[RMDB]
RNA sequence: GGGAACGACUCGAGUAGAGUCGAAAACAUGUCCGGUUAGCGACGCGCUCGUGCAUAAGGCGUGGAGGCUCGUCUGAACUGGUGCGCUUCGGUGGGGAACACGCCGGAUGAUCAUGCAUAGCGGUUAAUCACUGAGUGGUUUCGACCACUCAGUGAUAAAAGAAACAACAACAACAAC
Reactivity to DMS in 0.01 (KOAc 150mM, MgCl2 10mM, bicine 150mM(pH8.5), 24C), signal-to-noise 3, nucleotides 027 to 126: c090a070u010g020u000c010c010g000g010u010u010a090g010c110g030a050c070g010c040g000c010u000c100g030u000g010c040a060u000a180a140g000g000c020g030u000g020g000a080g000g010c020u000c030g000u000c020u010g010a080a090c120u000g000g000u010g000c100g000c070u000u000c020g000g020u020g000g020g010g020a090a300c020a040c030g010c000c010g000g010a120u000g010a130u020c160a070u000g000c030a070u010a070g010c030g010g010u000u000a090
Reactivity to 2A3 in 0.01 (KOAc 150mM, MgCl2 10mM, bicine 150mM(pH8.5), 24C), signal-to-noise 2, nucleotides 027 to 126: c050a070u150g020u000c040c000g080g020u150u130a070g020c000g060a020c050g040c000g000c120u060c070g030u020g030c020a030u040a120a040g000g000c000g010u030g100g010a040g070g060c000u000c030g090u040c020u080g010a050a060c070u080g080g020u090g010c050g000c050u030u020c030g140g050u100g020g000g000g060a050a010c010a000c050g020c070c010g000g020a040u060g030a060u070c070a030u020g010c050a030u030a050g000c020g060g010u070u080a050